[RMDB]
RNA sequence: GGGAACGACUCGAGUAGAGUCGAAAACAUUGGGGAGUAGCCGGCCUUAGUCAACUAAGGGAUCUGCGUCAACAUUCUUGGCCCGCAGGCCAUGGUGCAGAUAGUCGCAAGACUUGGCGAGACCAUCAACGGUUCGAGAAUUCGUUCUCGAACCGUUAAAAGAAACAACAACAACAAC
Reactivity to 2A3 in 0.01 (KOAc 150mM, MgCl2 10mM, bicine 150mM(pH8.5), 24C), signal-to-noise 3, nucleotides 027 to 126: c050a060u050u050g020g000g000g000a000g000u010a000g000c000c010g020g000c010c000u010u010a020g030u100c100a110a180c290u010a000a010g030g000g000a010u000c010u000g000c000g010u010c000a010a010c000a040u130u000c000u050u020g010g000c010c040c090g180c240a150g000g000c000c000a000u010g000g000u020g010c010a000g000a020u010a000g000u000c000g040c120a100a050g010a010c000u000u000g000g000c010g000a000g000a000c000c000a000u020c000
Reactivity to DMS in 0.01 (KOAc 150mM, MgCl2 10mM, bicine 150mM(pH8.5), 24C), signal-to-noise 2, nucleotides 027 to 126: c070a130u030u000g000g000g000g000a070g000u020a100g010c000c020g000g000c000c000u000u000a010g020u030c300a160a180c000u000a000a020g000g000g010a020u000c010u000g000c030g010u000c030a040a300c180a120u060u030c130u020u000g000g000c000c020c300g000c300a050g030g010c000c000a000u010g000g010u000g010c060a000g010a030u000a020g000u000c000g000c300a050a090g000a000c010u000u030g000g010c020g000a300g000a030c020c000a020u030c100

Notes
Chemical mapping of a 177-nucleotide RNA with 2A3 and DMS. It was measured as part of the RMDB libraries RFM100 and RFMREP. The reactions ran in a buffer of 150 mM KOAc, 10 mM MgCl2 and 150 mM bicine (pH 8.5), at 24 C. The 2A3 profile rests on 2,947 reads.